[RMDB]
The record gives the reactivity of an RNA of 207 nucleotides to DMS and 2A3. 2A3 adducts were read by reverse transcription with SuperScript II with manganese. Values are in units of 0.01, from 0 to 300, in steps of 10. The 2A3 profile rests on 2,531 reads. Conditions: 150 mM KOAc, 10 mM MgCl2 and 150 mM bicine (pH 8.5), 24 C. It was measured as part of the RMDB library OK3TST.

RNA sequence: GGGAACGACUCGAGUAGAGUCGAAAAGUUCAGUAUUUGCGGAAGUGGUACGGAAAACUUCUGUUCGGUACUAUCUCACGGGGACCCUAGUAAAAUCUUCAUGUACAAAUUCCUGUACCUGAACGAAGAGUUAAGGCAACAGUCGUGGUCUCAUUGGCGUCAUAUGAUUCUUCGGAAUCAUAUGACGAAAAGAAACAACAACAACAAC
Reactivity to DMS in 0.01 (KOAc 150mM, MgCl2 10mM, bicine 150mM(pH8.5), 24C), signal-to-noise 3, nucleotides 027 to 156: g010u000u010c100a060g000u000a060u000u000u010g040c040g000g000a090a120g030u000g020g030u000a200c110g010g000a110a090a060a050c030u000u010c020u010g040u000u000c100g000g000u000a020c020u010a070u000c080u010c040a200c070g010g020g010g010a070c020c020c020u000a130g000u000a080a040a110a090u000c040u000u000c040a110u010g010u000a110c040a010a020a220u010u010c090c070u000g020u000a070c030c030u000g000a020a060c090g030a080a060g010a220g030u000u000a030a060g010g000c050a070a050c030a090g010u000c030g030u010g000g010u010c020u000c050a210u010u000g000g030
Reactivity to 2A3 in 0.01 (KOAc 150mM, MgCl2 10mM, bicine 150mM(pH8.5), 24C), signal-to-noise 3, nucleotides 027 to 156: g020u060u090c050a010g020u030a100u030u200u220g080c030g010g020a050a050g040u070g080g060u170a110c090g050g000a060a050a060a050c020u020u010c020u020g050u060u040c070g030g000u020a010c020u050a080u120c050u020c060a040c030g010g000g000g030a020c020c000c020u030a060g070u130a070a110a120a170u020c000u020u000c010a020u050g000u020a010c020a030a100a250u220u080c030c030u010g010u010a010c010c010u010g020a040a020c150g010a030a010g030a010g050u080u150a050a020g060g020c060a120a020c020a080g060u070c010g060u110g080g030u010c010u010c030a050u060u130g090g010